[RMDB]
RNA sequence: GGGAACGACUCGAGUAGAGUCGAAAAGAUAUGGAGUGGUACUUUUGACGGUGAUGUAGCUCGGAAACGAGCUACUAAUCACCGAUAAGUACACACUCCUAAGUCAAAACAUGCCUUCGGGCAUGAACCCUAGAUCUAACUUCGGUUAGAUCUAGGGAAAAGAAACAACAACAACAAC
Reactivity to DMS in 0.01 (KOAc 150mM, MgCl2 10mM, bicine 150mM(pH8.5), 24C), signal-to-noise 3, nucleotides 027 to 126: g000a060u000a300u000g000g010a020g030u000g000g010u000a010c000u010u010u000u000g010a270c130g000g010u020g020a040u000g000u000a000g020c000u010c000g010g010a080a080a220c000g000a000g010c000u000a000c000u030a060a050u000c000a010c000c000g000a010u010a000a010g010u000a000c000a190c000a000c000u000c000c000u000a000a080g000u000c030a120a090a200a300c010a000u000g000c010c000u000u030c250g040g000g020c000a010u000g000a050a180
Reactivity to 2A3 in 0.01 (KOAc 150mM, MgCl2 10mM, bicine 150mM(pH8.5), 24C), signal-to-noise 3, nucleotides 027 to 126: g020a010u080a050u190g000g010a000g020u010g000g030u010a010c010u130u120u160u240g300a160c060g000g000u010g000a010u050g000u010a000g010c000u000c000g010g000a060a110a050c000g000a000g000c010u010a000c000u000a020a000u010c010a000c000c000g010a000u010a010a000g010u000a000c060a020c010a000c010u010c000c000u010a040a000g000u000c020a000a020a120a220c010a010u000g000c000c000u050u100c300g050g000g000c000a010u000g020a030a030